[RMDB]
RNA sequence: GGGAACGACUCGAGUAGAGUCGAAAAUACGCCUGUAACGCCAUAUUCAUCACUUUUCUUCUUUUCUCAACUAUGUUUCGCAAUGUUCCAGGUGUAAAGAAGACGUGCGACCAAUCUUUUGGAGCGCCCACCCAGUCCAUUUCGAUGGACUGGGUGGAAAAGAAACAACAACAACAAC
Reactivity to DMS in 0.01 (KOAc 150mM, MgCl2 10mM, bicine 150mM(pH8.5), 24C), signal-to-noise 1, nucleotides 027 to 126: u020a220c140g000c000c000u020g010u000a040a000c000g110c180c160a120u010a100u050u030c100a060u000c000a020c060u000u040u040u000c020u000u040c000u000u000u000u000c000u000c040a140a120c080u000a110u030g000u000u000u000c000g090c080a170a140u000g030u000u000c010c000a040g020g050u070g000u000a030a000a020g000a240a060g000a070c300g030u000g070c000g030a040c040c010a100a080u070c060u000u000u040u000g020g020a270g040c060g000c040
Reactivity to 2A3 in 0.01 (KOAc 150mM, MgCl2 10mM, bicine 150mM(pH8.5), 24C), signal-to-noise 4, nucleotides 027 to 126: u090a020c030g000c030c000u020g050u040a020a030c050g030c040c060a130u090a150u280u110c050a070u080c030a090c060u080u040u060u000c010u060u030c020u010u070u010u010c010u000c010a100a140c030u110a090u290g060u030u120u040c070g020c090a110a080u200g010u010u020c050c020a010g040g000u020g030u090a060a060a040g080a020a040g060a050c040g060u090g030c000g020a130c000c040a010a060u210c100u090u280u050u040g010g020a050g040c000g030c000

Chemical mapping of a 177-nucleotide RNA with DMS and 2A3.